[RMDB]
Source: RMDB library OK2TST, as collected in RNAgym. Chemical mapping of a 177-nucleotide RNA with DMS and 2A3. 2A3 adducts were read by reverse transcription with SuperScript II with manganese. The DMS profile rests on 4,653 reads. For 2A3, 4,569 sequencing reads were counted.
RNA sequence: GGGAACGACUCGAGUAGAGUCGAAAACACUUCCAAGACAUGUGGAUGAAUUUUUCGGAAAUAUCGGGAUCAACGUAUUGGAAGGUUAUGGAAUGACGGAGACUUCUCCCGUUAUUUCCGUGAGAACCAUCAUUCACAACUUCGGUUGUGAAUGAUGAAAAGAAACAACAACAACAAC
Reactivity to DMS in 0.01 (KOAc 150mM, MgCl2 10mM, bicine 150mM(pH8.5), 24C), signal-to-noise 4, nucleotides 027 to 126: c080a170c040u000u000c000c010a030a060g000a100c150a120u010g030u000g000g020a110u010g000a070a090u000u000u000u010u000c060g000g000a020a020a020u000a040u000c000g010g000g000a070u000c080a040a110c090g000u000a060u000u000g010g000a050a030g020g010u000u000a080u010g010g000a070a090u010g010a040c020g000g000a170g000a110c240u010u010c130u000c020c010c000g020u000u000a000u000u000u000c000c010g020u000g000a060g000a090a100c170
Reactivity to 2A3 in 0.01 (KOAc 150mM, MgCl2 10mM, bicine 150mM(pH8.5), 24C), signal-to-noise 4, nucleotides 027 to 126: c020a010c010u010u000c000c000a000a020g110a060c080a180u210g030u100g160g020a040u070g110a150a160u110u100u020u050u080c050g020g030a020a050a020u060a050u020c010g000g060g020a030u060c030a070a060c050g070u070a100u050u080g080g050a040a030g030g020u060u080a100u140g060g070a120a100u110g030a050c020g040g000a060g060a060c080u140u040c010u060c020c010c000g000u000u010a010u000u030u000c000c000g010u050g010a060g000a020a010c020